[RMDB]
This 177-nucleotide RNA was probed chemically with DMS and 2A3. Values cover nucleotides 27 to 126. Values are in units of 0.01, from 0 to 300, in steps of 10. 2A3 adducts were read by reverse transcription with SuperScript II with manganese.
RNA sequence: GGGAACGACUCGAGUAGAGUCGAAAAUAUAGAUCUCAUGGCACUAGCACUCAGGAUCACUAGAUACUAGGCUAUGUACAGGAUCGCUAGACUCUAGCACUAGUGCUAGGAUCUCAUGGCGUACUAGUGAUAGAGUAAUCUUCGGAUUACUCUAUCAAAAAGAAACAACAACAACAAC
Reactivity to DMS in 0.01 (KOAc 150mM, MgCl2 10mM, bicine 150mM(pH8.5), 24C), signal-to-noise 9, nucleotides 027 to 126: u010a140u010a080g000a090u000c020u000c030a110u010g010g010c110a100c040u000a010g010c030a040c070u000c130a090g000g000a060u000c080a130c090u000a050g010a070u000a040c010u000a030g010g000c030u000a040u000g010u000a090c170a090g000g010a050u000c050g010c100u000a040g000a080c080u000c020u000a010g010c040a100c030u000a060g010u000g010c000u000a010g000g000a040u000c020u000c160a100u000g010g010c100g010u010a080c040u000a060g010
Reactivity to 2A3 in 0.01 (KOAc 150mM, MgCl2 10mM, bicine 150mM(pH8.5), 24C), signal-to-noise 7, nucleotides 027 to 126: u210a010u040a030g120a110u010c030u010c060a070u070g060g000c040a010c130u010a010g010c020a020c100u070c090a050g050g060a100u060c030a040c180u040a030g050a110u070a090c010u010a020g120g000c030u040a030u150g070u050a070c040a080g070g060a110u090c040g000c040u020a040g030a140c030u010c030u080a010g000c020a040c120u030a030g050u010g020c000u010a000g000g020a020u020c050u010c030a090u090g060g000c060g040u040a050c030u030a050g070